[RMDB]
RNA sequence: GGGAACGACUCGAGUAGAGUCGAAAAGAUAUGGACGUACCACUUGCUUGGACCGUUUCGAUUGUAGUAUCACUCGGAAACGAGUGAUACUACAAUCGAGAACGCUAGCAACGUACGUCCUAAGUCACGAUAACUAGAUGUUCGCAUCUAGUUAUCGAAAAGAAACAACAACAACAAC
Reactivity to DMS in 0.01 (KOAc 150mM, MgCl2 10mM, bicine 150mM(pH8.5), 24C), signal-to-noise 6, nucleotides 027 to 126: g010a050u000a300u010g010g000a010c000g020u000a010c010c050a090c150u000u000g000c010u000u000g020g010a160c290c140g000u000u000u000c000g010a010u000u000g000u000a000g010u010a000u000c000a010c000u000c000g010g010a110a110a220c000g010a010g010u000g010a000u000a000c000u000a000c000a000a000u000c000g000a010g000a000a020c010g010c010u000a010g000c000a030a010c170g000u000a020c010g000u000c000c000u000a010a080g010u000c040a300
Reactivity to 2A3 in 0.01 (KOAc 150mM, MgCl2 10mM, bicine 150mM(pH8.5), 24C), signal-to-noise 2, nucleotides 027 to 126: g060a040u110a060u180g010g010a000c010g000u000a000c010c030a200c170u010u010g020c000u020u060g060g130a300c100c230g050u000u030u000c000g020a000u000u000g000u010a010g000u000a000u020c000a000c000u000c010g000g070a140a090a080c010g010a020g000u020g000a010u000a000c010u010a010c000a000a000u000c000g000a000g010a000a000c000g040c000u010a000g010c030a010a050c300g000u000a000c000g000u010c000c000u010a000a010g000u000c010a010